[RMDB]
RNA sequence: GGGAACGACUCGAGUAGAGUCGAAAAUUCCUGAGCUGGGUGGGGCCGCAGAGACCAGAGAGAAGCGACUGUUUACUAAAAACACAGGUCCGUGCGAAGUCGUAAGACGAUGUAUACGGACUGACGCGGACCUACUUAUGUUCGCAUAAGUAGGUCCAAAAGAAACAACAACAACAAC
Reactivity to DMS in 0.01 (KOAc 150mM, MgCl2 10mM, bicine 150mM(pH8.5), 24C), signal-to-noise 1, nucleotides 027 to 126: u000u010c000c010u000g000a080g020c080u000g030g000g060u000g000g000g050g000c060c050g030c040a070g000a080g020a070c030c050a100g000a110g000a150g030a130a090g010c060g010a100c120u010g000u000u000u000a080c210u000a000a110a060a100a000c040a030c190a180g020g010u000c000c010g000u040g000c030g030a140a270g000u000c000g010u010a070a130g000a120c010g000a010u030g000u000a090u010a050c030g020g020a000c000u000g000a080c110g050c130
Description
The data come from the RNA Mapping Database (RMDB), library RFMREP. The record gives the reactivity of an RNA of 177 nucleotides to DMS. The reactions ran in a buffer of 150 mM KOAc, 10 mM MgCl2 and 150 mM bicine (pH 8.5), at 24 C. High DMS reactivity at an A or C suggests that its Watson-Crick edge is free. For DMS the reverse transcriptase was MarathonRT. For DMS, 753 sequencing reads were counted.